[RMDB]
RNA sequence: GGGAACGACUCGAGUAGAGUCGAAAACAGGCUGCCCCCUUUAGUGAGAAGCCCUAUCAGCCUCAACAGGUGAUAUUACCAUUACGCCAGCAUAUCGGUGCUGCCGCAGAGGCCAUCGUCGCAGUGGUCUCCUGGGGUAGUUCGCUACCCCAGGAGAAAAAGAAACAACAACAACAAC
Reactivity to DMS in 0.01 (KOAc 150mM, MgCl2 10mM, bicine 150mM(pH8.5), 24C), signal-to-noise 1, nucleotides 027 to 126: c220a020g030g030c000u000g010c040c000c020c010c050u010u030u000a070g040u030g030a170g000a220a060g000c020c060c070u000a110u000c030a050g000c010c000u000c030a110a120c140a040g010g010u000g010a090u000a060u000u030a050c010c040a130u010u000a090c060g030c100c000a010g010c030a010u000a140u000c150g000g000u000g020c020u020g060c050c000g020c190a090g030a040g010g010c010c060a030u020c100g000u000c150g060c080a050g010u000g020g010

Chemical mapping of a 177-nucleotide RNA with DMS. The RNA was probed in 150 mM KOAc, 10 mM MgCl2 and 150 mM bicine (pH 8.5) at 24 C. The data come from the RNA Mapping Database (RMDB), library OK2TRN. The DMS profile rests on 762 reads. For DMS the reverse transcriptase was MarathonRT.